[RMDB]
RNA sequence: GGGAACGACUCGAGUAGAGUCGAAAAUGUGAGAGCUAUUAAAGAGGGCGAGCUCACCUUCAAAUUCGACGUCCCGUUCGUGUAUGCGGAGGUGAACGCUGACGUGGUGGAGUACAUCAAACUGAGAUCAUGGAUGGCAUUUCGAUGCCAUCCAUGAAAAAGAAACAACAACAACAAC
Reactivity to DMS in 0.01 (KOAc 150mM, MgCl2 10mM, bicine 150mM(pH8.5), 24C), signal-to-noise 2, nucleotides 027 to 126: u000g020u010g000a070g000a070g010c020u020a060u000u020a040a120a110g010a090g010g010g010c000g020a110g020c110u000c030a020c000c030u000u000c010a060a250a150u000u000c030g020a040c110g010u000c100c030c020g010u000u000c050g010u000g030u000a040u000g000c300g000g000a010g000g030u000g010a000a030c150g010c060u010g020a100c120g020u010g000g010u010g010g020a070g000u010a060c080a040u000c090a010a100a110c100u000g030a120g020a130
Reactivity to 2A3 in 0.01 (KOAc 150mM, MgCl2 10mM, bicine 150mM(pH8.5), 24C), signal-to-noise 1, nucleotides 027 to 126: u110g020u080g030a030g000a000g130c050u090a010u160u160a300a080a010g100a060g000g000g060c000g040a050g030c010u010c000a010c000c000u060u030c000a000a040a090u040u030c000g080a010c020g110u030c050c060c010g000u080u070c000g000u100g030u100a100u110g020c070g000g010a010g000g000u010g000a000a010c010g000c040u030g030a000c060g040u000g000g010u040g000g060a080g000u060a080c050a050u080c050a030a010a010c080u090g050a040g070a130